[RMDB]
RNA sequence: GGGAACGACUCGAGUAGAGUCGAAAAACGGCUGGGUGCAGUUGAUCAACGCCCUAGCGGUUGUCGCGGUGACCCCGCUGUUGACGCCGUGGCUGAGCAAGCAGCUCGCACUUGGUCCACGGCCAGACAACUACCUACGAUUCGUCGUAGGUAGUUGAAAAGAAACAACAACAACAAC
Reactivity to 2A3 in 0.01 (KOAc 150mM, MgCl2 10mM, bicine 150mM(pH8.5), 24C), signal-to-noise 4, nucleotides 027 to 126: a000c070g080g000c020u030g000g040g030u250g010c070a160g060u170u120g150a200u230c090a000a030c020g000c000c020c020u020a030g000c050g020g000u040u050g050u010c090g000c020g040g070u140g090a110c010c000c010c020g000c030u030g050u030u100g030a050c050g000c000c000g000u000g000g000c020u020g000a020g000c090a210a040g000c020a080g120c090u120c160g020c000a070c000u010u010g010g010u100c040c000a000c000g010g000c000c000a010g030a050
Reactivity to DMS in 0.01 (KOAc 150mM, MgCl2 10mM, bicine 150mM(pH8.5), 24C), signal-to-noise 7, nucleotides 027 to 126: a030c040g000g020c010u000g010g010g020u010g020c020a100g020u000u000g020a120u020c160a070a030c040g000c000c070c070u000a050g010c010g010g020u000u000g020u010c040g010c040g000g010u010g010a130c110c030c010c030g000c020u010g010u000u000g000a110c180g000c000c000g030u000g000g000c020u010g000a010g000c090a120a110g010c020a170g010c230u010c180g000c020a120c010u000u000g010g000u010c000c010a010c000g000g000c010c080a020g010a150